[RMDB]
RNA sequence: GGGAACGACUCGAGUAGAGUCGAAAAGAUAUGGAGGGAUGUUACUCGAUGAGCGUAACAUCUGUCGGAAACGACAGUGGCGAGAGUCCAUCCCUCCUAAGUCAAAAGCUCCAGUUCGCUGGAGCAACGGAGACAUUAUGUUCGCAUAAUGUCUCCGAAAAGAAACAACAACAACAAC
Reactivity to DMS in 0.01 (KOAc 150mM, MgCl2 10mM, bicine 150mM(pH8.5), 24C), signal-to-noise 3, nucleotides 027 to 126: g000a030u000a300u000g000g030a020g010g010g000a010u000g000u010u000a040c010u000c000g010a120u010g030a270g030c010g010u020a040a130c140a020u000c010u000g000u010c010g020g000a120a090a230c020g000a010c000a000g030u000g010g020c000g010a100g000a020g010u020c300c030a030u020c010c000c010u000c000c000u000a000a080g020u000c050a060a080a090a150g000c000u000c000c000a000g000u000u010c250g000c010u000g000g000a010g000c000a000a020
Reactivity to 2A3 in 0.01 (KOAc 150mM, MgCl2 10mM, bicine 150mM(pH8.5), 24C), signal-to-noise 1, nucleotides 027 to 126: g030a010u040a030u130g000g000a000g000g000g000a010u010g020u090u120a040c000u020c020g110a190u270g170a090g140c020g070u100a090a050c000a150u100c020u000g000u000c000g000g000a000a060a030c010g000a000c000a000g010u020g050g010c030g000a140g010a010g070u000c010c000a010u010c010c000c000u000c000c000u000a010a010g000u010c010a050a030a020a000g000c000u000c000c010a020g030u080u070c280g000c100u000g000g010a000g000c010a000a000
Chemical mapping of a 177-nucleotide RNA with DMS and 2A3.
For DMS, 1,932 sequencing reads were counted.
For 2A3 the reverse transcriptase was SuperScript II with manganese.